[RMDB]
RNA sequence: GGGAACGACUCGAGUAGAGUCGAAAAGAUGGAGUUUCGACUCCAUCAAAAAACCGUAGGAAUGAGAACAGCUUUUGACGCUCGUAGGUUCGAAAGAGCCUGACGAGCGAUAAGCUGACAUUCCUAAACGGAAAAAAGGUAAGGUUCGCCUUACCAACGCUUGUAGAAGGUUCGCCUUCUACAAGCGAAAAGAAACAACAACAACAAC
Reactivity to 2A3 in 0.01 (KOAc 150mM, MgCl2 10mM, bicine 150mM(pH8.5), 24C), signal-to-noise 2, nucleotides 027 to 156: g000a010u020g000g000a010g010u040u090u230c150g100a080c000u010c000c000a010u020c000a000a000a000a000a000a020c000c000g010u000a000g000g010a000a000u040g020a120g100a300a110c000a000g000c000u080u120u090u280g180a060c030g000c020u000c000g000u020a030g000g000u000u000c000g000a090a110a120g000a000g000c020c000u040g170a010c010g010a000g000c000g010a000u000a000a000g000c000u000g000a020c000a000u000u010c000c010u010a070a030a000c020g010g000a000a000a000a130a000a000g050g000u040a020a010g010g020u020u130c240g120c040c000u000u000a000c050c000a000a000